[RMDB]
This 177-nucleotide RNA was probed chemically with 2A3. 2A3 adducts were read by reverse transcription with SuperScript II with manganese. Values are in units of 0.01, from 0 to 300, in steps of 10.
RNA sequence: GGGAACGACUCGAGUAGAGUCGAAAAAGCGGUGGGCAUGGGAACAUGGAGGAAAGCCCAAACUCUUCUUCGCCUCUAGAACUAGGGGCUGAGAUUUGGUUUCCUUGUUUUCCUGAUGCCUCCCAUGGGCUCAAGCUCCAUUCGUGGAGCUUGAGCCAAAAGAAACAACAACAACAAC
Reactivity to 2A3 in 0.01 (KOAc 150mM, MgCl2 10mM, bicine 150mM(pH8.5), 24C), signal-to-noise 1, nucleotides 027 to 126: a000g120c140g000g070u160g000g000g000c000a000u020g000g010g010a010a000c000a000u100g200g000a000g020g030a000a000a090g070c000c010c070a000a020a020c050u050c020u150u030c000u090u070c120g000c000c040u040c000u000a070g000a150a110c270u010a010g000g000g000g000c000u000g000a030g010a070u000u000u000g010g040u000u000u000c000c000u020u020g060u000u000u000u030c000c000u020g150a040u010g000c000c000u010c000c000c080a000u160g010